[RMDB]
RNA sequence: GGGAACGACUCGAGUAGAGUCGAAAACGGCACUGCUUCGGCAGUGCCGAAAUCAUGGCCAAAUGUAUAGCAUAAAGCAGGCGGAAGUGCAGUUAGAAUAAGAAAGUAACACCUUCGGGUGUUACAAUCCUAAGUCUAACUUCGGUUAGACUUAGGAAAAAGAAACAACAACAACAAC
Reactivity to 2A3 in 0.01 (KOAc 150mM, MgCl2 10mM, bicine 150mM(pH8.5), 24C), signal-to-noise 1, nucleotides 027 to 126: c030g060g000c000a010c020u010g030c010u030u050c130g050g070c000a010g010u020g000c000c000g000a000a010a000u050c010a070u090g050g000c000c010a000a030a030u090g080u060a130u060a140g050c030a030u140a160a150a030g000c020a010g000g030c010g010g040a090a010g060u080g040c010a010g000u140u170a040g120a130a120u150a110a030g070a070a020a010g000u000a000a000c000a000c010c010u030u080c270g160g000g000u010g010u010u000a010c000a000a000
Reactivity to DMS in 0.01 (KOAc 150mM, MgCl2 10mM, bicine 150mM(pH8.5), 24C), signal-to-noise 4, nucleotides 027 to 126: c020g020g030c010a020c000u000g000c000u000u010c180g020g000c000a020g040u010g010c000c000g000a010a030a060u000c090a040u010g020g010c040c020a060a140a110u000g020u000a070u000a060g010c040a060u010a040a070a150g020c050a050g000g000c040g000g000a060a070g000u000g010c050a040g020u000u000a050g000a110a090u010a060a090g010a090a070a130g010u000a000a000c000a000c000c000u000u010c140g020g010g010u000g010u000u000a000c000a040a100

Record summary: Structure probing data (2A3 and DMS) for a 177-nucleotide construct. The reactions ran in a buffer of 150 mM KOAc, 10 mM MgCl2 and 150 mM bicine (pH 8.5), at 24 C. Values are in units of 0.01, from 0 to 300, in steps of 10. For 2A3 the reverse transcriptase was SuperScript II with manganese. For 2A3, 1,029 sequencing reads were counted.